[RMDB]
RNA sequence: GGGAACGACUCGAGUAGAGUCGAAAACGUAAGUCGAAGCAGACAACAGGGAAACAGGUUAAUAUUCCUGUGCCAGUGUGCACUCAAAGCUGACGCUUUGGGGCCGCCUCUGCUGGGUUUUCGCCCACCGUACGUGACUAUUCGUAGUCACGUACGGAAAAGAAACAACAACAACAAC
Reactivity to 2A3 in 0.01 (KOAc 150mM, MgCl2 10mM, bicine 150mM(pH8.5), 24C), signal-to-noise 5, nucleotides 027 to 126: c030g050u040a060a050g040u020c020g080a130a010g040c010a000g050a040c040a120a050c040a200g010g000g030a090a280a000c000a000g020g030u070u110a120a030u070a150u160u150c000c000u010g000u010g030c010c000a020g020u010g070u130g020c050a170c230u000c000a000a000a000g000c030u190g150a060c190g020c010u040u010u000g010g000g000g000c000c010g000c000c000u010c000u000g000c000u030g020g010g010u010u000u010u050c050g010c000c000c010a030
Reactivity to DMS in 0.01 (KOAc 150mM, MgCl2 10mM, bicine 150mM(pH8.5), 24C), signal-to-noise 2, nucleotides 027 to 126: c080g000u020a080a020g010u010c030g020a070a020g000c010a030g000a040c190a190a080c140a130g000g000g010a080a080a020c010a020g000g000u030u000a080a070u030a210u070u020c000c000u000g000u000g000c050c020a120g000u000g000u030g000c050a070c010u000c030a000a000a000g020c000u010g040a170c300g000c000u000u000u000g000g000g000g020c090c060g000c050c120u010c000u000g000c010u000g010g000g000u030u000u010u000c080g010c000c020c020a180
Structure probing data (2A3 and DMS) for a 177-nucleotide construct. The RNA was probed in 150 mM KOAc, 10 mM MgCl2 and 150 mM bicine (pH 8.5) at 24 C. Reactivities are given for positions 27 through 126. For 2A3 the reverse transcriptase was SuperScript II with manganese.